[RMDB]
RNA sequence: GGGAACGACUCGAGUAGAGUCGAAAACUGUGGACGUGAGUCCACAGAAGGUCGACCGUUCGCGGUCGACCAACAAGCCGUUCGCGGCUUGAAGUUACACGUGAGUGUAACAAAAGAAAGGACAUUAAACACGAUCGGAUCGUGAGAUCCGAUCAAAGUAAGUUUCUCCUAUCGCCAUCUGGAUGGGAUUUAAGAGACUUAUGCCAAACUCUUUGAGUUUGAUGCCAAUUCAGUUUUCGUCUGAAUUGAUGCCCGAAAGGAUGGCAAGUUGCCUCUUCGGAGGCAACAAAAGAAACAACAACAACAAC
Reactivity to DMS in 0.01 (KOAc 150mM, MgCl2 10mM, bicine 150mM(pH8.5), 24C), signal-to-noise 1, nucleotides 027 to 266: c000u000g010u000g000g020a000c000g000u020g010a270g020u010c000c000a010c010a040g010a100a090g000g000u020c000g010a040c000c010g010u010u020c170g000c030g020g060u030c030g060a000c070c040a020a120c000a020a030g000c000c010g070u020u020c180g070c000g010g030c000u000u000g020a110a100g040u000u000a000c000a010c030g000u000g000a160g010u000g010u010a000a020c000a100a050a170a130g000a090a150a090g040g020a080c130a070u010u000a050a080a030c100a090c250g010a010u000c000g020g000a030u020c010g000u050g010a180g000a000u000c000c000g010a010u000c010a020a050a060g010u000a070a040g000u000u000u010c040u000c050c020u000a120u020c110g010c000c000a000u000c020u000g010g000a300u000g000g000g000a080u010u010u000a110a100g030a070g000a070c130u000u000a040u040g000c110c040a000a030a030c000u000c000u010u010u000g000a010g010u010u000u000g000a060u030g000c070c010a010a020u000u010c010a000g000u000u000u010u000c300g000u010c000u000g000a040a010u010u000g010a040u000g010c000c000c000g000a060a110a220g010g000a000u010g000g000c030a050a060
Reactivity to 2A3 in 0.01 (KOAc 150mM, MgCl2 10mM, bicine 150mM(pH8.5), 24C), signal-to-noise 3, nucleotides 027 to 266: c000u000g020u010g020g000a000c030g080u120g150a080g000u020c000c000a000c000a000g000a030a000g020g000u000c000g000a000c000c000g020u020u070c270g020c020g150g010u000c000g030a010c000c000a000a000c000a000a000g010c010c000g020u060u140c250g050c010g190g000c030u000u030g010a010a010g010u010u000a000c000a000c010g100u100g120a080g000u000g030u000a010a020c050a000a080a010a000g160a070a070a010g070g040a050c090a120u210u240a160a110a010c050a030c060g000a000u000c000g010g000a000u000c000g010u020g090a050g000a010u000c000c010g010a010u020c030a020a000a000g070u020a100a010g000u000u010u000c060u030c030c010u150a130u270c080g010c000c000a010u000c000u020g000g000a030u130g060g020g000a030u120u080u210a170a060g130a030g020a020c040u140u040a050u260g010c010c020a000a000a000c010u030c030u100u200u300g010a000g010u010u000u010g040a060u130g090c040c010a000a010u020u010c000a000g030u020u040u170u290c120g180u030c030u020g000a000a000u000u000g020a020u150g050c020c000c000g040a040a010a010g030g000a000u000g000g000c000a000a000